[RMDB]
RNA sequence: GGGAACGACUCGAGUAGAGUCGAAAACGAGGUUUUGAUGGUGGGCUCAGAAAUGUUAGGGUGAGUGUGGACAAAUAUGUUACCAUGCAUCUUAUUGAGUAUGCUAUGAACACCACACUCAAAGUGGGACGCACGUGCAUUUCGAUGCACGUGCGUCAAAAGAAACAACAACAACAAC
Reactivity to 2A3 in 0.01 (KOAc 150mM, MgCl2 10mM, bicine 150mM(pH8.5), 24C), signal-to-noise 1, nucleotides 027 to 126: c000g000a030g020g030u000u000u000u110g180a100u090g080g080u000g010g000g000c150u130c010a040g210a020a050a000u030g000u060u020a050g000g070g110u120g000a000g000u000g000u000g000g080a150c190a250a000a000u120a000u000g050u020u150a080c030c030a000u000g000c000a030u000c000u210u200a300u160u260g090a070g000u300a000u000g000c000u000a000u030g040a000a000c010a000c000c000a040c000a000c000u000c000a000a000a000g020u020g080g000